[RMDB]
The record gives the reactivity of an RNA of 207 nucleotides to DMS and 2A3. Reactivities are rounded to 0.1 and cut off at 0 and 3. 2A3 adducts were read by reverse transcription with SuperScript II with manganese.
RNA sequence: GGGAACGACUCGAGUAGAGUCGAAAAAAUGCGAGACAGUGACAAACGCUAUCCCUACCAUGACAGUAUUAGUGUUUGUACAGCACCAAGUGCAACAACAACGACUGUUGAAUUCCAAUCUGAUGCUUCUGGGGACGUGUAUAUAAUAGAUAACGAAAUAGCAUUCUCUUUUCGAAGAGAAUGCUAUAAAAGAAACAACAACAACAAC
Reactivity to DMS in 0.01 (KOAc 150mM, MgCl2 10mM, bicine 150mM(pH8.5), 24C), signal-to-noise 2, nucleotides 027 to 156: a090a050u000g030c030g000a160g000a180c020a120g020u010g030a100c080a040a080a180c030g030c010u000a100u000c010c000c030u000a090c030c040a180u000g020a100c080a090g020u000a060u000u000a020g020u000g040u000u000u000g010u000a100c110a150g030c050a100c060c120a070a070g000u030g010c000a080a060c050a090a060c010a040a130c070g030a100c060u000g000u000u000g000a090a140u000u000c020c020a020a140u000c010u000g010a070u010g000c010u000u020c040u010g030g000g010g010a010c030g020u000g020u000a080u000a090u000a070a090u000a130g020a160u000a090a100c060g000a070a050
Reactivity to 2A3 in 0.01 (KOAc 150mM, MgCl2 10mM, bicine 150mM(pH8.5), 24C), signal-to-noise 3, nucleotides 027 to 156: a000a000u170g000c070g000a070g030a030c090a160g100u100g150a050c080a050a090a010c020g000c010u030a040u040c000c000c000u030a050c020c030a060u130g040a040c010a030g030u030a110u110u180a060g030u040g030u030u050u060g010u060a070c030a010g020c050a060c050c110a110a120g050u020g010c000a060a030c000a010a030c020a030a020c090g120a010c030u010g000u010u010g100a080a120u070u010c010c000a010a030u020c040u050g050a160u050g010c000u050u030c050u190g000g000g000g010a010c010g090u040g010u010a020u030a020u000a180a120u080a040g160a070u120a130a040c040g090a110a230

For DMS the reverse transcriptase was MarathonRT. It was measured as part of the RMDB library OK3TST.